[RMDB]
RNA sequence: GGGAACGACUCGAGUAGAGUCGAAAAAGAGCGAGCCCUCCGAUCCGAUGGGGCCCUGGACCCCUCAGCUCUGGAGACUUCCGACCUGUGAGGUCGAGGAUUCCCCGUGGAGGGAGACAGCCACCGGUGACACUACGGUUCGCCGUAGUGAAAAGAAACAACAACAACAAC
Reactivity to 2A3 in 0.01 (KOAc 150mM, MgCl2 10mM, bicine 150mM(pH8.5), 24C), signal-to-noise 9, nucleotides 027 to 129: a010g140a010g010c050g020a030g010c000c000c000u000c010c010g100a170u100c040c020g040a080u200g010g000g010g020c020c010c010u070g070g010a040c010c010c000c000u020c010a020g010c000u020c040u110g020g000a110g060a160c090u180u020c030c010g020a050c010c000u040g030u070g100a050g010g000u000c010g020a010g000g010a030u180u240c000c000c000c010g040u090g010g010a000g000g020g000a000g050a000c010a020g010c000c010a030c010c000g020g030u070g010a010
Reactivity to DMS in 0.01 (KOAc 150mM, MgCl2 10mM, bicine 150mM(pH8.5), 24C), signal-to-noise 9, nucleotides 027 to 129: a060g010a090g030c010g010a120g010c020c010c010u010c010c000g010a130u030c120c120g030a050u030g010g000g000g020c300c010c010u020g010g000a060c020c010c010c020u000c020a040g000c180u010c010u050g050g000a070g000a100c210u040u000c000c000g010a020c100c010u010g000u010g030a060g010g030u000c000g010a020g000g010a040u010u010c000c010c010c010g000u030g000g000a040g000g010g000a040g020a070c080a150g000c010c030a070c020c020g000g010u010g000a220